This 177-nucleotide RNA was probed chemically with 2A3.
RNA sequence: GGGAACGACUCGAGUAGAGUCGAAAAGAAGACGUGACGAAAAGUCACGAAAAGUCCGAAAGGACAAAGGAGCAAAACCAUCGGCUCCUAAAAACGAUGGAAACUUGAUCGAGAGAUCAAGAAAAGACACCGUCAGUCCAUUCGUGGACUGACGGUGAAAAGAAACAACAACAACAAC
Reactivity to 2A3 in 0.01 (KOAc 150mM, MgCl2 10mM, bicine 150mM(pH8.5), 24C), signal-to-noise 1, nucleotides 027 to 126: g200a090a030g190a010c010g000u000g000a000c000g080a140a000a190a240g010u000c000a000c000g000a070a000a000a000g000u030c000c000g060a130a000a000g020g030a010c090a080a090a090g000g000a010g000c000a000a000a270a270c010c000a000u000c000g010g000c000u000c000c000u020a020a020a000a000a050c000g000a000u000g010g000a030a030a020c000u000u000g000a010u000c010g000a000g110a100g000a190u000c000a000a000g050a000a160a000a020g090a040